An RNA of 207 nucleotides, treated with 2A3 and read out base by base. For 2A3 the reverse transcriptase was SuperScript II with manganese. 2A3 is a SHAPE reagent: it acylates the 2'-hydroxyl of flexible nucleotides of all four kinds. The 2A3 profile rests on 1,039 reads. The data come from the RNA Mapping Database (RMDB), library M2RFPK.
[RMDB]
RNA sequence: GGGAACGACUCGAGUAGAGUCGAAAAACUAAUCCAAAGCAAGUAUAGGAGAACAGGUUUUUAACUAUUUUUAGGCAGAUAAAAAAUAGUAUUUGACAGUCUAACACUAACUGAACAAUAAGUGCUAAAAAGUCGUCUCUGUUCGCAGAGACGACAACCAUACCCACUCGUUCGCGAGUGGGUAUGGAAAAGAAACAACAACAACAAC
Reactivity to 2A3 in 0.01 (KOAc 150mM, MgCl2 10mM, bicine 150mM(pH8.5), 24C), signal-to-noise 1, nucleotides 027 to 156: a000c030u060a080a010u000c000c010a010a020a010g030c000a000a020g010u020a020u050a120g000g030a030g030a110a070c130a230g100g000u030u000u000u000u030a040a000c000u000a010u010u030u000u010u020a010g020g010c080a020g060a240u180a060a060a000a010a000a000u000a000g000u010a020u020u020u010g010a010c000a000g010u000c000u000a000a000c000a000c000u010a020a000c010u020g020a020a000c000a000a030u010a030a000g000u000g010c000u100a030a090a050a000a050g020u000c000g000u000c000u000c000u000g040u050u030c200g020c060a000g000a000g000a000c000g000a000c000a000a000